[RMDB]
RNA sequence: GGGAACGACUCGAGUAGAGUCGAAAAAGAAACAGGAAGUAAAGGAGGAAGCGCACGGCAAUCGAGAAAAACACUGAAUGCCGUACAGUGACCACUCGAAAGCGCAAAUAAAACUUCCUGAUAAAAACGUUGCUCUAUAAUUCGUUAUAGAGCAACGAAAAGAAACAACAACAACAAC
Reactivity to 2A3 in 0.01 (KOAc 150mM, MgCl2 10mM, bicine 150mM(pH8.5), 24C), signal-to-noise 2, nucleotides 027 to 126: a000g110a000a090a020c010a010g020g000a000a000g000u070a110a100a070g070g040a070g050g050a150a050g010c000g000c010a020c020g120g000c080a050a090u030c010g000a000g020a080a150a040a010a010c030a010c010u010g020a120a040u130g000c050c030g000u010a040c020a000g000u000g020a060c000c040a030c030u010c010g000a040a030a000g020c000g000c000a060a110a010u070a020a040a020a010c000u000u010c000c000u020g000a020u110a040a080a000a000a010
Reactivity to DMS in 0.01 (KOAc 150mM, MgCl2 10mM, bicine 150mM(pH8.5), 24C), signal-to-noise 2, nucleotides 027 to 126: a100g010a130a100a150c020a000g000g010a010a010g000u000a100a140a090g000g010a090g010g010a130a200g000c010g030c000a120c040g000g000c130a080a100u010c000g000a040g000a070a080a040a180a140c030a050c020u020g000a090a070u000g030c040c050g000u010a070c020a010g000u000g000a150c170c180a190c000u000c010g030a030a050a120g000c000g000c040a060a060a100u010a020a070a150a040c000u000u000c000c000u010g000a080u010a040a050a050a050a080

The record gives the reactivity of an RNA of 177 nucleotides to 2A3 and DMS. For DMS the reverse transcriptase was MarathonRT. It was measured as part of the RMDB library M2PK90.